[RMDB]
RNA sequence: GGGAACGACUCGAGUAGAGUCGAAAAUAUGAACGACUGGAGCGCGACCUCAUCGAGGUAUGGUCGCGUAUCCAGCGGCAUGUCCAGUGGAUACGUAAUGUCUCGGAGGUAUUCGCGGAGAAUCCGCGGGAUCCCGAUGAUUCGUCAUCGGGAUCCCAAAAGAAACAACAACAACAAC
Reactivity to 2A3 in 0.01 (KOAc 150mM, MgCl2 10mM, bicine 150mM(pH8.5), 24C), signal-to-noise 4, nucleotides 027 to 126: u260a020u050g080a190a020c010g280a160c030u020g010g000a000g010c020g010c000g010a000c000c000u050c080a140u190c130g130a080g030g160u180a040u120g040g020u040c030g000c010g000u020a080u000c000c000a000g020c000g010g000c010a020u090g050u090c020c020a040g010u040g030g010a010u000a010c030g010u150a230a110u120g060u050c050u050c080g070g030a040g050g000u040a060u030u080c020g000c000g010g000a100g080a050a080u070c010c010g030c020
Reactivity to DMS in 0.01 (KOAc 150mM, MgCl2 10mM, bicine 150mM(pH8.5), 24C), signal-to-noise 2, nucleotides 027 to 126: u030a010u000g000a060a160c050g000a070c000u000g000g000a040g000c000g000c000g000a020c010c010u010c190a170u030c120g000a130g040g000u040a080u000g000g020u030c020g010c000g000u000a000u020c000c000a010g010c030g000g000c020a020u000g020u010c000c030a160g040u010g000g000a030u000a050c050g010u030a150a060u020g000u030c040u010c010g000g030a150g000g000u000a030u040u040c070g010c030g010g000a180g020a140a100u000c000c000g040c180